This 207-nucleotide RNA was probed chemically with DMS and 2A3. The DMS profile rests on 2,102 reads.
RNA sequence: GGGAACGACUCGAGUAGAGUCGAAAAGUCCAAGGGCGAGUCGACCUCUCCAUCGGCACGAGGACGUGCCUGGUUUUGAGUGGGGGGAGGAUGUUACGGACAAAUUCCGUAACCGUGUGAGGCCAACAUCAAAGAUGCGUACCUAGCUGCGUUUCAAGUCAAUAAAGGUGUUCGCACCUUUAUUGACAAAAGAAACAACAACAACAAC
Reactivity to DMS in 0.01 (KOAc 150mM, MgCl2 10mM, bicine 150mM(pH8.5), 24C), signal-to-noise 1, nucleotides 027 to 156: g050u000c010c000a160a110g000g010g030c080g000a090g030u010c000g040a220c000c010u000c050u020c000c080a050u010c030g050g000c060a080c050g000a090g050g020a300c000g050u020g000c000c050u000g000g010u010u010u010u010g040a110g040u000g040g040g030g010g050g000a150g080g000a120u000g010u000u000a040c000g000g050a070c060a150a080a200u040u000c000c000g030u010a000a010c010c200g020u020g010u010g000a090g020g020c040c010a030a090c000a030u000c100a070a100a160g010a060u000g020c000g000u000a050c000c000u010a230g000c020u000g020c010g050u000u000u010c020a130a300
Reactivity to 2A3 in 0.01 (KOAc 150mM, MgCl2 10mM, bicine 150mM(pH8.5), 24C), signal-to-noise 3, nucleotides 027 to 156: g080u070c050c000a030a080g050g000g000c040g000a010g020u030c030g040a100c000c010u000c010u010c020c030a080u080c030g020g000c010a000c010g050a130g160g230a110c080g000u000g010c000c010u030g070g040u010u080u170u110g120a090g010u110g020g000g030g000g000g000a030g050g000a030u100g000u000u000a000c000g020g000a010c100a090a160a070u290u000c010c000g000u000a000a020c000c000g020u020g030u050g100a040g000g010c010c020a040a010c030a050u170c060a030a100a050g050a020u090g010c020g040u050a050c010c010u060a030g040c040u070g080c070g010u000u010u020c050a140a000
Source: RMDB library VIROID, as collected in RNAgym.